Structure probing data (DMS and 2A3) for a 177-nucleotide construct. DMS adducts were read by reverse transcription with MarathonRT. For 2A3 the reverse transcriptase was SuperScript II with manganese. The RNA was probed in 150 mM KOAc, 10 mM MgCl2 and 150 mM bicine (pH 8.5) at 24 C. For DMS, 6,142 sequencing reads were counted.

RNA sequence: GGGAACGACUCGAGUAGAGUCGAAAACGUGGAAUAGCCACGAGAUCUGCGGGCAAGUUACCGAAGAGGAAGGACGGGUUAACUCAGCGCCAGCAUUCGAAGCGCUAGGGAUGGUAAGCACAACCUAAAAUAAUUAUUUAUUCGUAAAUAAUUAUUUAAAAGAAACAACAACAACAAC
Reactivity to DMS in 0.01 (KOAc 150mM, MgCl2 10mM, bicine 150mM(pH8.5), 24C), signal-to-noise 4, nucleotides 027 to 126: c060g010u000g000g020a300a120u030a120g020c010c000a030c000g010a150g000a050u010c020u010g020c060g010g000g020c090a080a090g020u000u010a060c050c030g010a120a080g040a120g000g000a090a070g000g000a090c080g010g000g030u020u010a080a090c060u020c070a050g020c020g020c010c050a130g010c080a100u020u020c090g020a150a160g010c030g010c020u010a050g010g010g000a050u020g010g010u010a050a080g020c100a040c110a040a080c050c030u040a060
Reactivity to 2A3 in 0.01 (KOAc 150mM, MgCl2 10mM, bicine 150mM(pH8.5), 24C), signal-to-noise 4, nucleotides 027 to 126: c020g000u040g030g060a270a250u110a230g100c010c000a000c000g000a020g010a080u050c040u080g010c030g030g010g020c090a090a040g010u060u070a070c020c010g050a110a040g050a060g060g060a040a060g050g010a020c040g020g020g000u060u090a040a040c020u020c100a020g010c010g030c050c010a030g040c030a070u140u180c040g070a080a010g020c030g000c070u080a070g040g020g000a040u050g020g050u050a070a010g020c010a030c010a060a090c000c030u100a030